The record gives the reactivity of an RNA of 177 nucleotides to DMS and 2A3. The reactions ran in a buffer of 150 mM KOAc, 10 mM MgCl2 and 150 mM bicine (pH 8.5), at 24 C. It was measured as part of the RMDB library VIROID.
[RMDB]
RNA sequence: GGGAACGACUCGAGUAGAGUCGAAAACCCAGAGGGGCACUUUUUAUGUGAACUUCUGCAGGUUAAGCUCGGCGCUCAAGAGUUGUAUCCACCGGGUAGUUUCCAACUCCGUCUGGUUUGAAGAAGGCAUAAUCUGUUUGUUCGCAAACAGAUUAUGAAAAGAAACAACAACAACAAC
Reactivity to DMS in 0.01 (KOAc 150mM, MgCl2 10mM, bicine 150mM(pH8.5), 24C), signal-to-noise 2, nucleotides 027 to 126: c000c000c000a030g010a030g030g010g000g030c010a010c010u000u010u020u010u020a030u030g010u000g000a010a010c010u000u000c000u000g010c180a170g020g000u000u000a050a120g010c100u000c010g000g010c060g010c020u000c010a120a210g010a040g010u000u000g010u010a100u010c010c010a070c160c020g000g010g000u010a030g000u000u000u010c010c010a080a120c120u000c020c010g020u010c020u000g010g010u020u000u000g000a100a090g010a050a060g000g010
Reactivity to 2A3 in 0.01 (KOAc 150mM, MgCl2 10mM, bicine 150mM(pH8.5), 24C), signal-to-noise 1, nucleotides 027 to 126: c000c000c010a000g000a010g000g030g030g070c020a000c010u250u300u110u200u250a170u300g000u000g000a010a000c000u020u020c000u020g030c140a080g000g020u040u060a030a050g070c050u000c030g010g030c050g030c000u000c000a020a120g010a000g000u000u060g010u040a300u020c000c000a040c000c110g060g000g000u020a020g000u000u040u000c020c010a030a050c010u040c030c010g120u030c060u100g210g040u090u140u220g060a070a040g030a040a010g060g000